[RMDB]
RNA sequence: GGGAACGACUCGAGUAGAGUCGAAAACAGACCAAGUAUGCAGUAGAGGUCAUUGCCCCGCUAGUCUCAGCUGAAAAGCUUAUGCAAGGAUGGCUUAUGGAUGAUCUUGAGUGUGCUAGGUGUGAUAGCUGCCUGCUGAAGAUAAAGUCUACUGUGAGAAGCUAUUAUGUUUCGACAUAAUAGCUUCAAAAGAAACAACAACAACAAC
Reactivity to DMS in 0.01 (KOAc 150mM, MgCl2 10mM, bicine 150mM(pH8.5), 24C), signal-to-noise 3, nucleotides 027 to 156: c060a110g020a100c020c010a130a220g020u000a070u010g010c010a070g030u000a130g010a090g000g030u000c030a120u000u000g000c010c030c010c070g040c040u010a080g030u010c020u000c080a100g000c020u000g010a110a100a140a070g000c010u000u000a080u010g010c060a070a110g020g000a070u000g000g000c050u000u000a100u000g020g000a080u000g000a040u000c050u000u000g000a120g050u000g040u000g020c020u010a110g020g020u000g020u000g000a120u010a100g020c020u000g000c030c040u010g000c030u010g000a090a080g000a100u000a050a060a120g020u000c020u000a060c020u010g010u000g020a300
Reactivity to 2A3 in 0.01 (KOAc 150mM, MgCl2 10mM, bicine 150mM(pH8.5), 24C), signal-to-noise 6, nucleotides 027 to 156: c050a030g080a020c010c010a030a060g110u100a100u180g020c000a010g010u060a010g020a010g000g010u010c030a040u020u150g050c000c010c010c020g020c050u030a040g060u050c030u020c080a020g000c010u030g030a060a070a040a020g000c020u090u060a060u160g030c020a030a050g060g000a080u090g030g000c020u070u080a060u160g070g030a050u070g020a030u040c000u050u070g040a050g020u080g000u030g020c040u070a060g010g040u050g030u030g070a070u080a080g030c040u030g050c020c030u040g020c020u030g030a070a010g020a050u100a090a080a030g040u020c010u050a020c020u070g050u060g030a020

This 207-nucleotide RNA was probed chemically with DMS and 2A3. For 2A3 the reverse transcriptase was SuperScript II with manganese. Source: RMDB library OK3TST, as collected in RNAgym.